An RNA of 177 nucleotides, treated with DMS and 2A3 and read out base by base. It was measured as part of the RMDB libraries RFM100 and RFMREP.
RNA sequence: GGGAACGACUCGAGUAGAGUCGAAAAAUCCUUCAGAAGUUAGGUAUAGAAGUAAGUCGAUUAAGUUCAUUCAUGACUUUUCCAGAUGUUGCAUACAUAACUUUUUUUAUUUGUAUUCGAACUAGUCAUAAAUGUUCUCUUUCGAGAGAACAUUUAUAAAAGAAACAACAACAACAAC
Reactivity to DMS in 0.01 (KOAc 150mM, MgCl2 10mM, bicine 150mM(pH8.5), 24C), signal-to-noise 5, nucleotides 027 to 126: a110u010c010c010u010u020c190a060g010a030a010g000u000u000a020g000g020u000a010u000a090g010a110a080g010u020a030a080g010u010c030g000a040u000u010a020a030g000u010u000c050a090u010u020c200a080u020g010a030c010u000u000u000u010c050c070a200g010a050u000g000u010u010g000c060a050u000a000c000a020u000a020a010c010u000u000u000u010u030u030u030a080u050u020u020g010u010a090u010u010c060g010a060a090c100u010a080g010u010c110
Reactivity to 2A3 in 0.01 (KOAc 150mM, MgCl2 10mM, bicine 150mM(pH8.5), 24C), signal-to-noise 5, nucleotides 027 to 126: a000u020c000c000u060u100c050a060g000a080a000g010u030u050a010g000g070u010a050u040a060g090a140a030g050u130a030a010g010u010c020g040a030u040u060a050a010g100u120u050c020a060u190u150c060a080u180g020a020c000u020u030u050u010c080c070a020g020a060u070g080u200u100g010c020a000u010a020c010a020u000a000a010c000u020u020u040u060u030u070u080a190u090u140u090g080u060a220u040u070c010g010a060a030c070u030a070g100u060c040